[RMDB]
RNA sequence: GGGAACGACUCGAGUAGAGUCGAAAAACGGUCGUACGCGACCGAGGCGCGGCUAGGUCGACGGACCGAACAAUGGCAUCCCGCAUUCUGCCAUCCGCCGCGCACCUUCUUCUCAAACGGUGCGGAAAAAAGUAGGACACCUUCGGGUGUCCUACAACACUAGACACUGCUUCGGCAGUGUCUAGUGAAAAGAAACAACAACAACAAC
Reactivity to 2A3 in 0.01 (KOAc 150mM, MgCl2 10mM, bicine 150mM(pH8.5), 24C), signal-to-noise 2, nucleotides 027 to 156: a000c020g000g000u000c010g020u070a060c230g000c010g140a000c000c000g010a030g010g000c000g000c000g000g000c010u000a000g010g000u010c020g140a170c190g150g010a010c010c010g000a000a000c020a020a000u010g000g000c000a010u100c020c040c020g000c000a030u300u060c020u050g000c000c000a020u010c000c020g000c000c000g000c000g000c010a020c000c000u060u040c040u070u020c030u000c010a100a100a030c050g000g000u000g000c010g000g000a030a010a040a000a050a040g000u010a000g000g000a000c000a010c000c040u030u110c230g040g010g000u000g000u000c000c000u000a010c000a000a000

This 207-nucleotide RNA was probed chemically with 2A3. For 2A3 the reverse transcriptase was SuperScript II with manganese.